Structure probing data (2A3 and DMS) for a 177-nucleotide construct. The data come from the RNA Mapping Database (RMDB), library OK2TRN. The DMS profile rests on 1,270 reads. For 2A3 the reverse transcriptase was SuperScript II with manganese. Reactivities are rounded to 0.1 and cut off at 0 and 3.

[RMDB]
RNA sequence: GGGAACGACUCGAGUAGAGUCGAAAAGAAAUCAAGCUGGUAGGAGAGGGGUAUGAGCGUAUCGGAUCCCAUUGCAGAUAUGCUGACGAAGAUCAGAAAUGCCUCGCUGGCGCGGCAUGAGAAGGUGGUCCUUCUGUGAUUUCGAUCACAGAAGGACAAAAGAAACAACAACAACAAC
Reactivity to 2A3 in 0.01 (KOAc 150mM, MgCl2 10mM, bicine 150mM(pH8.5), 24C), signal-to-noise 1, nucleotides 027 to 126: g060a010a060a060u150c030a000a050g050c020u030g010g090u060a010g020g040a080g000a060g020g020g010g000u000a020u090g090a030g030c020g000u000a020u060c020g010g080a090u020c100c020c010a060u020u160g000c010a000g010a090u090a040u160g030c010u000g100a010c090g080a150a050g020a210u040c000a010g000a010a140a000u030g000c020c030u020c020g020c000u030g000g030c010g020c010g050g000c020a000u090g030a040g040a090a020g060g080u250g040
Reactivity to DMS in 0.01 (KOAc 150mM, MgCl2 10mM, bicine 150mM(pH8.5), 24C), signal-to-noise 1, nucleotides 027 to 126: g020a050a090a070u030c060a050a080g000c030u000g020g010u030a100g010g000a050g020a110g010g010g000g010u010a030u000g000a030g030c030g000u000a020u010c080g000g000a150u000c030c010c020a060u030u000g000c050a090g010a010u010a020u010g010c010u010g010a120c080g020a050a100g000a090u000c060a070g000a100a120a020u000g000c000c010u020c050g030c070u010g060g000c030g050c110g000g000c040a030u010g020a080g000a040a080g010g010u010g000